The data come from the RNA Mapping Database (RMDB), library ARCHII.
Structure probing data (2A3) for a 207-nucleotide construct.
For 2A3, 744 sequencing reads were counted.
2A3 adducts were read by reverse transcription with SuperScript II with manganese.
The reactions ran in a buffer of 150 mM KOAc, 10 mM MgCl2 and 150 mM bicine (pH 8.5), at 24 C.
RNA sequence: GGGAACGACUCGAGUAGAGUCGAAAAGAUUCAACCCUAGUAGGAUAUGCUAAACACUGCCGCUUGAAGUCUGUUUAGAUGAAAUAUAAUCAAGCUAGUAUCAUGUUGGUUGUUUAUUGCUUAGCAUGAUGCGAAAAUUAUCAAUAAACUACACACGCUCAUCCCAACUGUUCGCAGUUGGGAUGAGAAAAGAAACAACAACAACAAC
Reactivity to 2A3 in 0.01 (KOAc 150mM, MgCl2 10mM, bicine 150mM(pH8.5), 24C), signal-to-noise 2, nucleotides 027 to 156: g120a040u130u100c060a070a180c000c000c010u080a100g140u130a060g110g020a080u070a090u300g000c000u000a000a000a000c000a000c010u040g000c030c030g000c000u000u050g000a010a010g000u010c020u010g010u030u030u000a020g010a100u080g130a010a190a000u250a040u040a020a060u040c010a010a000g000c000u000a010g010u000a000u000c000a000u000g000u000u010g010g010u000u060g040u070u040u010a020u000u040g010c000u020u020a010g000c000a000u000g000a000u000g000c000g000a000a020a020a060u220u120a100u130c010a010a000u020a010a000a000c020u030a020c170a010c000a020c140g030